[RMDB]
RNA sequence: GGGAACGACUCGAGUAGAGUCGAAAACUAUAAGUAGCAACAUCUUUGUAUUGACACCAAGAUGUGCUCUAGGCGCCGAAGGGGCAAGAAGAGUAAAACAACUCCUCCAAUCUCUCAGGCAAAAGGAGAUCUAUCAAUAGUUCGCUAUUGAUAGAUCAAAAGAAACAACAACAACAAC
Reactivity to DMS in 0.01 (KOAc 150mM, MgCl2 10mM, bicine 150mM(pH8.5), 24C), signal-to-noise 4, nucleotides 027 to 126: c010u010a100u010a100a110g000u000a020g030c010a050a070c010a000u000c010u000u000u000g010u010a300u020u010g010a190c210a050c070c070a010a000g000a010u000g020u000g010c010u000c010u010a110g010g020c260g020c010c020g010a180a090g000g010g000g030c090a170a120g000a010a020g010a020g020u000a060a100a090a130c300a080a060c000u010c000c010u000c000c010a050a130u000c010u000c010u010c080a300g010g000c020a050a040a110a100g000g030a180
Reactivity to 2A3 in 0.01 (KOAc 150mM, MgCl2 10mM, bicine 150mM(pH8.5), 24C), signal-to-noise 5, nucleotides 027 to 126: c030u040a030u060a300a050g140u190a020g010c030a030a150c000a030u010c010u030u020u030g040u070a160u080u300g150a060c060a010c190c010a000a000g000a000u000g000u000g010c000u000c000u010a070g100g000c060g000c050c000g010a040a010g010g000g010g000c030a010a020g010a020a000g010a000g010u090a040a220a080a050c060a030a030c020u000c000c010u000c000c010a030a050u010c010u000c010u020c060a030g010g000c000a030a070a020a020g060g020a110